Description:
Structure probing data (DMS and 2A3) for a 177-nucleotide construct. Conditions: 150 mM KOAc, 10 mM MgCl2 and 150 mM bicine (pH 8.5), 24 C. Reactivities are rounded to 0.1 and cut off at 0 and 3.
[RMDB]
RNA sequence: GGGAACGACUCGAGUAGAGUCGAAAAGUCCUCAUUUUGAGGGACUAAAAUCAAAUAUUCGACAUAUUACAAGGACCAAAUCCAAUAUGAAUCAAUUUUACAAGGACUAAAACAAAAUACCAAGGACAUAAUAAAUAUCAUUCGUGAUAUUUAUUAUAAAAGAAACAACAACAACAAC
Reactivity to DMS in 0.01 (KOAc 150mM, MgCl2 10mM, bicine 150mM(pH8.5), 24C), signal-to-noise 2, nucleotides 027 to 126: g000u020c000c000u000c080a130u010u010u020u010g010a030g020g020g020a110c010u000a010a010a020a010u000c050a030a020a040u000a040u000u000c040g010a040c060a010u010a010u000u010a010c040a030a050g000g000a020c000c000a010a010a040u010c080c050a000a010u000a000u000g000a030a000u000c070a030a000u000u000u000u000a000c010a010a010g000g000a010c020u010a000a000a010a010c000a000a010a020a010u000a010c010c000a000a010g010g010a010c020
Reactivity to 2A3 in 0.01 (KOAc 150mM, MgCl2 10mM, bicine 150mM(pH8.5), 24C), signal-to-noise 4, nucleotides 027 to 126: g010u010c000c010u020c030a050u040u080u070u110g050a090g040g080g040a000c020u020a000a010a010a080u090c090a040a060a030u210a140u150u180c070g040a030c030a070u040a020u030u080a080c090a070a040g000g000a000c000c010a000a030a070u030c020c020a000a020u010a010u020g010a010a010u030c030a020a020u010u010u020u030a020c020a010a010g040g000a010c010u010a010a000a010a010c010a000a030a000a000u010a030c000c010a010a000g020g000a010c000
The data come from the RNA Mapping Database (RMDB), libraries RFM100 and RFMREP.